An RNA of 177 nucleotides, treated with DMS and 2A3 and read out base by base.
RNA sequence: GGGAACGACUCGAGUAGAGUCGAAAAGAUAUGGAAUACUCCAAUGAUGCAUGUAACAAGUAUUCGGAAACGAAUACCGCCCAUGUUGAGGAGUUCCUAAGUCAAAACCAACCGUUCGCGGUUGGAAGUUGACGAUGUUGUUCGCAACAUCGUCAACAAAAGAAACAACAACAACAAC
Reactivity to DMS in 0.01 (KOAc 150mM, MgCl2 10mM, bicine 150mM(pH8.5), 24C), signal-to-noise 1, nucleotides 027 to 126: g020a060u000a300u000g010g000a060a110u000a070c000u000c000c000a110a220u020g020a190u000g000c000a000u000g000u000a050a110c080a160a080g020u000a000u000u000c000g020g000a090a050a140c020g010a000a020u000a000c000c020g000c300c120c000a000u000g030u000u000g000a070g000g040a050g020u020u000c000c000u000a040a260g030u000c000a090a030a030a270c000c010a000a020c000c000g000u030u000c300g010c000g050g000u000u000g000g010a000a030
Reactivity to 2A3 in 0.01 (KOAc 150mM, MgCl2 10mM, bicine 150mM(pH8.5), 24C), signal-to-noise 1, nucleotides 027 to 126: g000a020u070a040u190g010g010a020a110u020a300c030u000c030c000a130a300u220g000a000u070g020c000a000u020g030u200a150a150c080a200a030g000u000a000u060u000c000g010g060a000a070a040c000g010a010a000u000a000c000c020g030c000c030c000a010u020g040u020u000g030a020g000g000a000g020u000u000c000c000u010a180a010g050u050c030a090a050a000a140c000c010a040a000c000c000g030u030u090c300g010c000g130g000u000u000g000g020a000a020

For DMS the reverse transcriptase was MarathonRT. Values cover nucleotides 27 to 126. The reactions ran in a buffer of 150 mM KOAc, 10 mM MgCl2 and 150 mM bicine (pH 8.5), at 24 C. It was measured as part of the RMDB library TTRDEL.